[RMDB]
RNA sequence: GGGAACGACUCGAGUAGAGUCGAAAACCCCGGUCCGAGAGAAGGGGGACUCCGGGACUCCUUGCAUGUUGGGGACGAAGCCGCCCCCGGGCGCUCCCCUCGAUCCACCUUCGAGGGGGUUCACACCAGAUCCAUUUGUUCGCAAAUGGAAAAAGAAACAACAACAACAAC
Reactivity to 2A3 in 0.01 (KOAc 150mM, MgCl2 10mM, bicine 150mM(pH8.5), 24C), signal-to-noise 7, nucleotides 027 to 129: c010c000c000c010g030g030u040c010c020g040a040g000a010g020a130a070g020g000g000g000g020a040c010u020c030c010g020g000g030a030c020u050c020c010u050u110g070c080a090u110g010u090u110g050g000g000g000a000c040g070a050a010g030c030c010g010c010c010c000c000c000g010g000g000c030g010c030u100c000c000c000c000u000c000g000a020u030c030c070a090c040c060u040u010c000g000a030g000g000g000g000g000u040u050c040a050c010a040c040c030a050g010a100
Reactivity to DMS in 0.01 (KOAc 150mM, MgCl2 10mM, bicine 150mM(pH8.5), 24C), signal-to-noise 5, nucleotides 027 to 129: c030c020c020c080g010g010u020c000c030g000a050g020a110g000a070a040g000g030g000g020g000a070c010u000c060c040g020g030g010a050c040u000c040c040u000u000g000c140a060u020g000u030u020g060g020g000g000a030c080g020a090a110g000c020c040g000c040c020c000c040c020g030g010g020c050g020c150u010c000c000c000c000u020c030g000a030u000c110c110a100c110c070u000u000c000g020a020g030g000g000g000g020u000u000c050a070c090a120c080c060a080g000a150